Structure probing data (DMS and 2A3) for a 177-nucleotide construct.
[RMDB]
RNA sequence: GGGAACGACUCGAGUAGAGUCGAAAACUGAGACUUUACGUGCCACUGAAGAGGCGUCUAAGCAGUCUUAUGCUAUUGCCACCAUCAAAGAAAUUGUUGGUGAGCGCCAACUAUUACUUGUGUGGGAUCUCACUUUAUCCUUCGGGAUAAAGUGAGAAAAAGAAACAACAACAACAAC
Reactivity to DMS in 0.01 (KOAc 150mM, MgCl2 10mM, bicine 150mM(pH8.5), 24C), signal-to-noise 1, nucleotides 027 to 126: c090u010g000a040g000a050c070u010u020u000a110c220g010u000g000c020c020a080c160u010g020a140a060g070a140g000g000c010g020u000c010u000a080a150g000c200a020g000u000c020u010u010a080u010g020c140u000a090u020u000g000c040c010a060c000c000a000u000c080a020a020a040g000a090a020a050u000u000g010u000u000g010g010u000g010a200g030c200g020c000c010a020a050c010u000a000u000u000a140c050u000u000g000u010g020u000g000g000g010a080
Reactivity to 2A3 in 0.01 (KOAc 150mM, MgCl2 10mM, bicine 150mM(pH8.5), 24C), signal-to-noise 2, nucleotides 027 to 126: c010u040g030a010g040a050c040u120u040u080a030c080g020u050g030c020c010a030c090u090g080a090a010g090a110g090g010c030g010u050c030u070a060a020g050c020a000g010u020c000u090u090a120u160g040c020u030a060u100u140g050c010c010a000c000c000a000u050c030a010a070a030g090a060a090a020u030u030g000u020u010g010g020u100g150a050g040c070g010c000c000a040a000c010u050a040u060u070a080c050u050u060g010u020g000u030g100g010g060a080
DMS adducts were read by reverse transcription with MarathonRT. The RNA was probed in 150 mM KOAc, 10 mM MgCl2 and 150 mM bicine (pH 8.5) at 24 C.